[RMDB]
RNA sequence: GGGAACGACUCGAGUAGAGUCGAAAAGGGAACGUGAGCUGGGUUUAGACCGUCGUGAGACAGGUUAGUUUUACCCUACUGAUGAGUUCGUUGUCUAAACAGUAAUCCAACCCAGUACGAGAGGAACGGUCAGCAUUAACUUCGGUUAAUGCUGACCAAAAGAAACAACAACAACAAC
Reactivity to 2A3 in 0.01 (KOAc 150mM, MgCl2 10mM, bicine 150mM(pH8.5), 24C), signal-to-noise 2, nucleotides 027 to 126: g080g030g000a050a050c020g210u170g000a010g040c000u000g010g110g000u000u090u090a010g000a010c010c040g090u060c000g090u100g040a000g000a060c050a070g010g000u010u090a000g010u000u000u100u070a160c050c050c000u000a070c040u050g130a150u040g010a040g100u000u200c090g030u130u120g060u100c010u120a160a140a000c030a020g070u060a050a080u040c000c000a000a000c000c000c000a010g000u040a040c000g000a030g000a040g090g100a000a000c010
Reactivity to DMS in 0.01 (KOAc 150mM, MgCl2 10mM, bicine 150mM(pH8.5), 24C), signal-to-noise 2, nucleotides 027 to 126: g010g010g020a040a090c050g000u000g000a110g010c010u000g000g000g000u010u010u000a110g000a020c000c020g020u020c000g000u090g010a150g010a040c020a020g070g000u000u000a170g000u030u010u020u000a050c030c070c090u000a070c030u000g010a030u010g010a170g010u000u000c180g040u020u010g010u000c120u010a020a160a090c070a090g000u030a100a050u000c060c010a020a040c000c030c000a020g010u010a080c140g000a060g000a040g000g000a040a080c110

Chemical mapping of a 177-nucleotide RNA with 2A3 and DMS. The RNA was probed in 150 mM KOAc, 10 mM MgCl2 and 150 mM bicine (pH 8.5) at 24 C. DMS adducts were read by reverse transcription with MarathonRT. 2A3 adducts were read by reverse transcription with SuperScript II with manganese.